[RMDB]
RNA sequence: GGGAACGACUCGAGUAGAGUCGAAAAUCCGACGAGCUGAACGCUUUCGAAGGAAAGCUUGACCAGCUAAUCUUCUGAAACGCCAUUACGAGGACUGCCCUUAGAGGCUCAUGGCGAUAGGUCACCCAAAACUAUUUGAGGUUCGCCUCAAAUAGAAUCGAAUUAAUGGGUUCGCCCAUUAAUUCGAAAAAGAAACAACAACAACAAC
Reactivity to DMS in 0.01 (KOAc 150mM, MgCl2 10mM, bicine 150mM(pH8.5), 24C), signal-to-noise 1, nucleotides 027 to 156: u000c040c030g000a060c040g000a040g040c000u000g000a110a160c210g000c030u000u000u000c080g030a230a210g000g010a060a200a030g010c010u000u010g000a160c160c070a080g000c020u000a120a030u000c020u000u000c030u000g020a130a120a070c010g020c000c010a080u030u020a140c030g010a170g040g030a050c040u000g020c000c010c020u010u000a160g000a130g030g010c020u000c040a040u010g010g010c000g000a160u010a020g010g040u010c010a180c020c000c010a040a080a070a240c000u010a010u000u000u010g000a020g010g010u000u010c300g000c030c010u010c000a010a000a010u010a010g000a090a120
Reactivity to 2A3 in 0.01 (KOAc 150mM, MgCl2 10mM, bicine 150mM(pH8.5), 24C), signal-to-noise 2, nucleotides 027 to 156: u030c000c010g020a040c080g020a010g000c010u020g050a160a050c060g000c020u060u030u070c040g080a100a060g100g010a040a070a000g000c020u040u070g060a070c050c010a000g000c000u020a050a130u070c080u180u060c030u100g070a080a080a050c010g000c000c000a030u070u180a070c120g050a080g000g180a080c100u100g020c010c000c000u070u160a140g040a180g110g000c000u010c020a010u020g010g000c000g050a040u090a050g000g000u010c030a080c020c040c000a060a080a030a040c020u000a000u000u000u000g000a000g040g010u050u070c180g050c030c000u000c000a010a000a000u000a000g010a000a040

Description: The record gives the reactivity of an RNA of 207 nucleotides to DMS and 2A3. The RNA was probed in 150 mM KOAc, 10 mM MgCl2 and 150 mM bicine (pH 8.5) at 24 C. Source: RMDB library M2RFPK, as collected in RNAgym. Reactivities are given for positions 27 through 156. The 2A3 profile rests on 1,979 reads. For DMS, 1,793 sequencing reads were counted.